RNA sequence: GGGAACGACUCGAGUAGAGUCGAAAACCCAUGGCUGCAGUAGGCUUGCUAAUUGUCAGCUAUGUGGUCUCGGGAAAGAGUGUGGACAUGUACAUUGAAAGAGCAGGUGACAUCACAUGGGAAAAGGCAUGGUUGGGCGGUUCGCCGCCCAACCAUGAAAAGAAACAACAACAACAAC
Reactivity to DMS in 0.01 (KOAc 150mM, MgCl2 10mM, bicine 150mM(pH8.5), 24C), signal-to-noise 1, nucleotides 027 to 126: c010c000c000a210u030g000g000c010u000g000c010a000g010u000a120g000g000c110u010u000g000c060u010a130a080u090u000g020u000c020a010g010c040u000a040u010g020u020g000g000u000c010u000c020g010g030g030a090a030a000g010a060g000u000g050u040g000g010a090c080a000u030g090u010a120c120a060u000u000g000a120a160a120g020a070g000c000a030g010g040u010g000a050c050a000u010c050a070c040a090u040g000g000g000a050a080a080a050g010g020
Reactivity to 2A3 in 0.01 (KOAc 150mM, MgCl2 10mM, bicine 150mM(pH8.5), 24C), signal-to-noise 3, nucleotides 027 to 126: c040c000c000a000u000g000g000c000u000g000c010a080g000u210a060g010g090c070u010u190g070c000u110a290a080u160u070g100u170c020a030g000c010u020a060u080g110u140g060g050u120c030u050c070g060g000g020a000a220a050g040a080g000u130g030u110g010g030a010c000a070u080g000u040a080c030a120u010u110g040a110a090a020g010a050g030c040a020g000g090u070g050a040c010a070u090c020a000c010a010u070g000g070g020a010a010a140a180g120g000